[RMDB]
RNA sequence: GGGAACGACUCGAGUAGAGUCGAAAAUACUUGGGCAUGGCAUUGUCUGUGUCGAUCUGGCUGUCCUUGUGGAAGCGGCUGUGGCUAAGGGCCAUUCGACGGAGGUCGGGUAGUCCUUCAGCCUUGAAGAAGCUGGCACUGGCACAGGGAGGAAACUGAUAUAUUUUCUCUUCGGAGAAAAUAUAUCAAAAGAAACAACAACAACAAC
Reactivity to 2A3 in 0.01 (KOAc 150mM, MgCl2 10mM, bicine 150mM(pH8.5), 24C), signal-to-noise 2, nucleotides 027 to 156: u140a020c010u060u110g060g010g000c000a030u000g010g000c050a210u130u260g040u130c010u020g030u010g010u020c020g070a140u040c050u100g070g000c030u050g060u110c000c010u080u070g010u030g010g100a110a020g000c010g030g010c010u010g000u020g060g030c010u010a010a020g010g010g000c000c000a000u010u030c010g000a000c030g060g160a180g150g000u000c010g020g000g000u020a010g010u000c000c000u040u070c080a010g000c000c000u030u040g010a020a030g020a010a010g010c010u070g060g040c060a060c150u060g070g000c010a010c010a020g010g000g020a020g000g050a030a060a070c070u040
The record gives the reactivity of an RNA of 207 nucleotides to 2A3. It was measured as part of the RMDB library ARCHII. Conditions: 150 mM KOAc, 10 mM MgCl2 and 150 mM bicine (pH 8.5), 24 C.